[RMDB]
This 177-nucleotide RNA was probed chemically with 2A3.
RNA sequence: GGGAACGACUCGAGUAGAGUCGAAAAACGCCAGUAGUACGCUACUGGCGAACACCGGCAGAAUCACUGUUCAGACAGGCGGAGACGGGUCUUUCUCGCCCUCUGAUGAGUCACCACUGUGGUGGAAGCUCCCUGCUGGCUUCGGCCAGCAGGGAGCAAAAGAAACAACAACAACAAC
Reactivity to 2A3 in 0.01 (KOAc 150mM, MgCl2 10mM, bicine 150mM(pH8.5), 24C), signal-to-noise 1, nucleotides 027 to 126: a000c000g000c020c000a000g000u000a000g000u030a000c260g030c160u000a000c000u000g000g000c000g000a000a000c020a000c000c030g030g020c090a040g000a110a000u120c000a060c020u000g070u110u040c000a060g000a100c000a070g050g000c000g190g000a000g020a080c140g010g030g090u100c070u100u090u000c000u000c000g120c000c040c000u000c000u000g090a130u100g080a000g000u010c040a000c000c000a030c050u030g030u110g060g010u010g000g050a070a050
Background:
2A3 adducts were read by reverse transcription with SuperScript II with manganese.